The record gives the reactivity of an RNA of 207 nucleotides to 2A3. The data come from the RNA Mapping Database (RMDB), library M2RFPK.
RNA sequence: GGGAACGACUCGAGUAGAGUCGAAAAGAAAUUACGUUUCCUUUACACUUCUCAAACCGGGAUCAAGAGAAGCAAAGCAUCCCUCAUAUCCACGAUGGAGGGUGUCGUGGAGUAUACGGUACCAAAAAGAGCGAACACGGCUUCGGCCGUGUUCGAAGGAUGCAAGAAUCUUCGGAUUCUUGCAUCCAAAAGAAACAACAACAACAAC
Reactivity to 2A3 in 0.01 (KOAc 150mM, MgCl2 10mM, bicine 150mM(pH8.5), 24C), signal-to-noise 1, nucleotides 027 to 156: g030a000a040a010u130u090a020c050g020u010u000u050c000c000u020u040u060a030c050a010c000u010u010c010u010c050a120a060a110c110c120g090g050g010a030u100c120a300a010g000a000g010a040a040g000c060a010a140a000g130c020a060u090c020c060c000u030c030a100u150a010u050c020c000a010c050g020a010u050g050g090a050g060g000g000u050g000u020c020g020u010g030g000a000g010u010a030u010a020c000g010g010u040a070c070c040a000a000a030a180a030g170a020g040c010g000a000a000c000a020c000g020g000c010u020u080c110g060g000c050c000g000u040g000u020u030c000g000a000a000